[RMDB]
RNA sequence: GGGAACGACUCGAGUAGAGUCGAAAAUUUUAAUGAGGAGUGAUGUAGUUACAAACUCUCCAGAGCCAUAAUUAGAGCAAACUAAUUGAAGUUGUGUUUUGACACACUUUCCAAAUUCACGGGUGCCACAAGCUGUUACUUUCGAGUAACAGCUUGUAAAAGAAACAACAACAACAAC
Reactivity to DMS in 0.01 (KOAc 150mM, MgCl2 10mM, bicine 150mM(pH8.5), 24C), signal-to-noise 2, nucleotides 027 to 126: u020u040u010u010a020a110u020g000a110g000g000a040g010u010g000a240u000g020u000a120g000u030u000a100c110a100a060a140c040u000c000u010c010c030a070g010a070g030c090c040a070u020a040a050u000u010a070g000a120g000c130a090a110a110c050u020a040a030u040u000g000a030a110g000u060u020g030u030g000u000u010u010u020g010a070c000a010c010a030c030u000u000u000c010c060a010a050a080u010u000c110a090c100g000g030g000u020g010c010c050
Reactivity to 2A3 in 0.01 (KOAc 150mM, MgCl2 10mM, bicine 150mM(pH8.5), 24C), signal-to-noise 1, nucleotides 027 to 126: u060u010u010u130a040a020u040g130a000g040g020a060g010u000g000a060u010g140u160a080g130u260u230a040c000a050a160a000c050u040c080u000c040c010a050g000a000g070c000c030a050u110a250a020u160u080a010g000a000g080c000a160a000a140c040u100a000a040u000u110g020a130a070g000u170u270g000u020g050u050u170u000u210g180a000c000a000c000a000c000u000u000u000c020c000a150a000a060u140u010c020a010c000g020g000g000u000g070c000c000